Structure probing data (DMS and 2A3) for a 177-nucleotide construct. The data come from the RNA Mapping Database (RMDB), library OK2TST.
[RMDB]
RNA sequence: GGGAACGACUCGAGUAGAGUCGAAAAGUAGUAGAUGUGGUGGGCGAACUCGUGGAUCGCAGUGUACAUGAGAUCGUUGUCGUUGGAGAAGUUGCGAUUGUGGAUGAUGAUCUCCCGCCUGUCGGGAACGGAUGCUAAUUUUCGAAUUAGCAUCCGUAAAAGAAACAACAACAACAAC
Reactivity to DMS in 0.01 (KOAc 150mM, MgCl2 10mM, bicine 150mM(pH8.5), 24C), signal-to-noise 3, nucleotides 027 to 126: g020u000a060g020u000a060g020a050u000g010u000g010g030u010g010g010g020c040g010a040a080c060u000c050g020u000g010g010a070u010c050g020c080a060g010u000g020u000a090c080a050u010g010a060g000a080u000c060g000u000u000g010u000c040g000u010u000g000g020a110g000a080a100g010u000u000g000c030g010a100u000u000g020u000g010g010a070u000g010a100u010g000a120u010c100u000c000c010c020g010c050c110u000g020u010c020g000g000g000a120
Reactivity to 2A3 in 0.01 (KOAc 150mM, MgCl2 10mM, bicine 150mM(pH8.5), 24C), signal-to-noise 3, nucleotides 027 to 126: g070u110a010g020u000a020g020a150u100g060u070g070g040u050g040g020g000c010g010a040a040c000u020c050g040u020g070g020a050u010c030g050c150a040g050u070g020u240a050c040a050u040g010a010g000a060u030c040g030u020u090g090u020c070g020u020u050g040g020a050g030a130a040g030u070u060g030c010g040a050u040u100g020u080g050g030a080u080g020a040u060g000a030u010c000u050c080c010c010g020c030c050u130g040u190c000g000g000g010a030

For DMS the reverse transcriptase was MarathonRT. For 2A3 the reverse transcriptase was SuperScript II with manganese. The 2A3 profile rests on 3,014 reads. The reactions ran in a buffer of 150 mM KOAc, 10 mM MgCl2 and 150 mM bicine (pH 8.5), at 24 C.